This 177-nucleotide RNA was probed chemically with DMS and 2A3. The RNA was probed in 150 mM KOAc, 10 mM MgCl2 and 150 mM bicine (pH 8.5) at 24 C.
RNA sequence: GGGAACGACUCGAGUAGAGUCGAAAAAAAUCACGAGAUCUGCACCCAACUUUAACGGUUGCUGUAAAACAGGUGUACAGAAACUAUUGUCAACAGCAAGUAAUGCGCCAUUUGCAUGCGCAAUAUAGUCCAGUAAUCGAUUCGUCGAUUACUGGACAAAAGAAACAACAACAACAAC
Reactivity to DMS in 0.01 (KOAc 150mM, MgCl2 10mM, bicine 150mM(pH8.5), 24C), signal-to-noise 2, nucleotides 027 to 126: a020a020a060u000c010a080c070g010a230g000a020u000c000u000g000c200a170c000c010c030a050a060c150u030u000u010a080a160c040g010g030u000u000g010c000u010g000u010a060a100a110a100c100a070g000g060u000g020u020a080c070a050g010a070a060a040c050u010a140u020u000g000u010c170a240a070c120a020g000c030a050a040g000u000a090a070u000g010c030g010c030c260a160u010u020u010g000c170a100u010g010c030g020c020a010a080u000a100u020a080
Reactivity to 2A3 in 0.01 (KOAc 150mM, MgCl2 10mM, bicine 150mM(pH8.5), 24C), signal-to-noise 2, nucleotides 027 to 126: a000a000a000u120c040a030c060g090a030g030a250u030c050u090g010c010a040c000c000c020a020a080c050u190u150u040a080a000c060g070g000u020u030g000c010u040g020u070a090a090a000a070c010a020g020g030u030g010u030a090c080a090g220a120a110a000c020u080a150u210u090g050u010c050a080a030c010a040g000c030a080a050g070u070a070a090u060g000c000g000c030c050a070u090u080u200g100c070a070u110g010c000g010c000a030a010u190a030u070a060